[RMDB]
RNA sequence: GGGAACGACUCGAGUAGAGUCGAAAAAAAUAUUCAUGUUUUAGAUUAAAGGUCGCACUCUCAGUAAUCUCUCUUGCAGCUAAACACACUUAAUACCAAGAUAGAGAGUGAACUUACCAGCAAUCACAUCUGUUGCAGCACAGAUAGCUUCAGCGAAUCCAUCAAAAUAGUUCGCUAUUUUGAUGGAAAAAGAAACAACAACAACAAC
Reactivity to 2A3 in 0.01 (KOAc 150mM, MgCl2 10mM, bicine 150mM(pH8.5), 24C), signal-to-noise 3, nucleotides 027 to 156: a000a000a000u240a070u110u080c060a060u100g060u010u070u040u070a050g010a040u080u100a120a070a070g040g000u050c060g010c040a010c010u020c000u000c010a040g040u080a170a160u030c090u020c030u030c020u120u040g010c060a130g030c060u080a060a140a030c060a010c040a010c070u030u100a050a020u060a160c050c020a010a010g000a020u080a060g000a000g000a000g000u010g010a040a040c010u030u030a020c000c000a010g040c030a020a050u050c040a040c030a120u000c010u040g000u050u050g040c020a010g020c000a020c010a050g060a040u080a030g020c020u090u090c020a000g090c010g050a030a110
Reactivity to DMS in 0.01 (KOAc 150mM, MgCl2 10mM, bicine 150mM(pH8.5), 24C), signal-to-noise 2, nucleotides 027 to 156: a050a050a070u000a050u020u000c050a130u010g020u000u000u010u000a110g010a190u000u010a090a170a110g010g020u010c110g000c000a050c010u000c000u000c010a120g010u010a070a080u000c000u000c010u000c010u000u000g010c070a080g030c020u000a050a070a130c060a080c070a070c090u000u000a040a160u010a220c100c020a070a090g000a180u000a040g000a100g010a090g020u000g010a060a070c070u010u000a090c000c010a110g010c080a060a060u000c070a050c090a060u000c030u000g000u000u000g000c040a070g000c040a140c040a030g000a070u000a090g010c060u000u000c060a080g020c050g010a090a180
An RNA of 207 nucleotides, treated with 2A3 and DMS and read out base by base.
For 2A3, 1,729 sequencing reads were counted.
The RNA was probed in 150 mM KOAc, 10 mM MgCl2 and 150 mM bicine (pH 8.5) at 24 C.
Source: RMDB library OK3TST, as collected in RNAgym.
The DMS profile rests on 3,581 reads.